[RMDB]
RNA sequence: GGGAACGACUCGAGUAGAGUCGAAAAGGUGUUUUCCAAAGCUAGAUAUACUGUUAGCGCCUUUGGCAACAGAAGAAAUGAAAAGACUGUUGUCUGCUGCACAGUUCGAGGGGCCAAGGCAGACGAAAUCCUGGAGAAUGAUCUAAAGGUGCAGGAAGGUAAUAUGGAUCUUCGGAUCCAUAUUACCAAAAGAAACAACAACAACAAC
Reactivity to 2A3 in 0.01 (KOAc 150mM, MgCl2 10mM, bicine 150mM(pH8.5), 24C), signal-to-noise 3, nucleotides 027 to 156: g080g000u020g020u020u050u050u040c030c030a110a100a000g020c040u090a030g030a160u100a040u060a190c030u050g010u110u050a010g010c000g010c030c010u040u070u100g020g000c020a000a000c010a030g040a120a050g020a090a300a150u220g070a060a150a030a050g080a050c030u030g010u030u010g010u000c050u040g040c020u020g010c010a010c000a050g000u030u060c050g010a060g000g030g000g000c010c010a040a030g030g000c010a020g020a020c020g020a070a010a020u040c000c010u030g010g010a040g020a060a040u120g010a010u050c020u100a040a050a100g080g010u010g000c020a010g030g040a100a040
Reactivity to DMS in 0.01 (KOAc 150mM, MgCl2 10mM, bicine 150mM(pH8.5), 24C), signal-to-noise 2, nucleotides 027 to 156: g030g020u010g030u000u000u000u010c010c040a100a150a100g000c020u000a120g010a170u000a140u020a040c070u000g010u000u000a080g000c020g030c030c080u000u000u000g010g000c000a050a180c040a040g000a100a090g020a090a140a150u040g000a130a150a100a080g000a130c010u010g010u000u010g020u000c010u000g000c050u020g000c000a070c100a140g000u000u010c040g030a150g030g000g010g030c020c000a120a130g020g060c110a030g000a120c050g020a080a050a100u000c020c030u010g000g010a150g030a090a040u000g000a080u000c060u010a070a060a040g020g000u010g000c030a080g030g030a140a150

The record gives the reactivity of an RNA of 207 nucleotides to 2A3 and DMS. For DMS, 2,502 sequencing reads were counted. For 2A3 the reverse transcriptase was SuperScript II with manganese. Conditions: 150 mM KOAc, 10 mM MgCl2 and 150 mM bicine (pH 8.5), 24 C. For DMS the reverse transcriptase was MarathonRT.